Chemical mapping of a 177-nucleotide RNA with DMS and 2A3. It was measured as part of the RMDB library 15KREP. DMS adducts were read by reverse transcription with MarathonRT.
[RMDB]
RNA sequence: GGGAACGACUCGAGUAGAGUCGAAAAACACUCGAGGAGUGGAAGGCGGGGAGGCGGGGUUCCCGGGCUUACCUACGGGAACUGCUGGUUUCCCCUUAUGUCCAGUCCCUCUCCCGUCCUGGUGAAGGCUAGAUAUAACGUUCGCGUUAUAUCUAGCAAAAGAAACAACAACAACAAC
Reactivity to DMS in 0.01 (KOAc 150mM, MgCl2 10mM, bicine 150mM(pH8.5), 24C), signal-to-noise 2, nucleotides 027 to 126: a090c090a030c080u000c070g020a020g000g000a100g010u010g010g010a090a050g000g000c300g000g000g000g000a010g000g000c020g020g000g010g000u000u000c020c000c000g000g010g010c060u010u020a060c270c140u030a060c010g020g020g000a020a010c020u010g040c010u000g000g010u010u000u000c010c010c000c010u000u000a020u050g010u010c030c010a080g010u000c090c010c000u000c070u000c010c010c010g010u000c070c040u010g000g020u000g010a190a070g030
Reactivity to 2A3 in 0.01 (KOAc 150mM, MgCl2 10mM, bicine 150mM(pH8.5), 24C), signal-to-noise 1, nucleotides 027 to 126: a000c020a000c020u050c010g010a050g020g000a060g030u060g000g020a060a000g020g040c060g000g000g050g020a010g000g050c040g020g030g000g030u000u060c000c030c010g010g010g030c040u070u070a020c010c010u020a060c000g010g020g000a020a020c030u130g240c020u050g040g130u000u010u020c000c000c000c000u010u090a040u040g030u030c010c000a010g100u020c000c010c000u000c020u000c000c000c000g000u090c030c080u160g120g000u050g080a060a040g070